[RMDB]
RNA sequence: GGGAACGACUCGAGUAGAGUCGAAAAAGCGAGCUCACGCGGCUCGCCGAGCGCCGCAGUCAGGUGCUGGAAGCCGAGCUCAAGGUCGAACUGUUGCGGCAACAGGCCGAGGAAAAAGAGCGGCAGACAAUUAGGAGCCUUUCGAGGCUCCUAAUUGAAAAGAAACAACAACAACAAC
Reactivity to DMS in 0.01 (KOAc 150mM, MgCl2 10mM, bicine 150mM(pH8.5), 24C), signal-to-noise 2, nucleotides 027 to 126: a180g020c050g000a030g070c020u010c080a150c280g010c200g030g000c020u010c060g010c000c050g000a150g030c150g010c020c010g050c080a140g000u020c050a220g010g020u000g010c030u020g010g020a180a130g020c030c050g010a090g020c070u000c030a140a100g020g010u010c170g040a070a100c030u000g010u000u010g010c040g000g000c070a050a220c020a060g000g010c000c010g000a070g000g010a060a030a030a130a050g010a060g020c000g030g020c030a200g020a110

This 177-nucleotide RNA was probed chemically with DMS. Reactivities are given for positions 27 through 126. The data come from the RNA Mapping Database (RMDB), library OK2TST. Conditions: 150 mM KOAc, 10 mM MgCl2 and 150 mM bicine (pH 8.5), 24 C.